[RMDB]
RNA sequence: GGGAACGACUCGAGUAGAGUCGAAAAUUCAUGGAGACCCAUCCCACACUGGAUGCCGUACACUGUGACAUCGGCAAUGCCACUGAGUUUAACAAAAUAUUCCAAGAUGAGAUUGGGGAGGUGUCACAUUAGGGUGCAGUUUCGACUGCACCCUAAUAAAAGAAACAACAACAACAAC
Reactivity to 2A3 in 0.01 (KOAc 150mM, MgCl2 10mM, bicine 150mM(pH8.5), 24C), signal-to-noise 4, nucleotides 027 to 126: u060u050c020a030u050g000g040a040g020a070c010c000c000a030u070c010c000c000a100c000a020c090u060g060g010a040u010g010c000c000g060u130a070c080a040c100u080g020u020g020a020c000a020u010c020g010g030c020a020a020u090g030c000c000a040c040u010g030a010g070u020u070u080a130a050c130a080a090a060a030u160a070u060u020c020c000a040a040g080a130u150g050a040g030a110u070u140g030g000g020g000a000g000g020u030g010u010c000a000c010
Reactivity to DMS in 0.01 (KOAc 150mM, MgCl2 10mM, bicine 150mM(pH8.5), 24C), signal-to-noise 4, nucleotides 027 to 126: u010u010c070a060u020g000g020a070g010a160c040c010c030a120u030c020c020c040a140c190a050c130u040g010g020a060u010g010c020c120g010u020a140c150a110c100u000g040u000g000a020c020a070u000c020g000g000c080a020a050u000g000c010c010a010c080u000g000a090g000u000u010u000a090a080c260a100a070a100a080u050a050u000u000c020c020a080a040g020a200u010g010a070g010a070u020u030g010g000g000g010a140g000g030u000g000u000c010a010c010